RNA sequence: GGGAACGACUCGAGUAGAGUCGAAAAGAUAUGGAGACCCAGUAUAAUUGAAACACCGUUCAGUCGGAAACGACUGACGGUAACUGCUCCUAAGUCAAACAUAAGCUAACUUCGGUUAGCUUAUGAAGAUUCACUUAAGGUUCGCCUUAAGUGAAUCAAAAGAAACAACAACAACAAC
Reactivity to DMS in 0.01 (KOAc 150mM, MgCl2 10mM, bicine 150mM(pH8.5), 24C), signal-to-noise 5, nucleotides 027 to 126: g030a060u000a270u000g000g000a030g000a180c130c140c030a100g020u010a070u010a110a100u010u010g010a180a140a140c220a030c000c000g000u010u010c000a010g010u000c010g000g010a080a050a150c010g010a030c000u000g000a010c000g000g010u000a010a030c070u000g000c020u000c000c000u010a060a140g010u010c050a100a090a270c000a010u000a000a010g000c000u000a000a000c000u000u010c210g010g010u000u000a000g000c000u000u000a000u000g010a090a090
Reactivity to 2A3 in 0.01 (KOAc 150mM, MgCl2 10mM, bicine 150mM(pH8.5), 24C), signal-to-noise 4, nucleotides 027 to 126: g030a010u130a040u140g040g000a010g040a080c110c130c140a030g100u070a130u090a270a270u130u180g160a160a100a020c100a030c060c030g100u250u160c000a030g000u000c010g030g050a120a040a020c010g000a000c020u000g000a000c020g000g000u000a000a000c010u020g010c000u000c000c000u030a130a080g060u100c080a060a040a140c000a090u000a000a010g000c010u010a010a000c000u050u100c180g050g000u000u020a010g020c000u000u000a000u000g000a000a010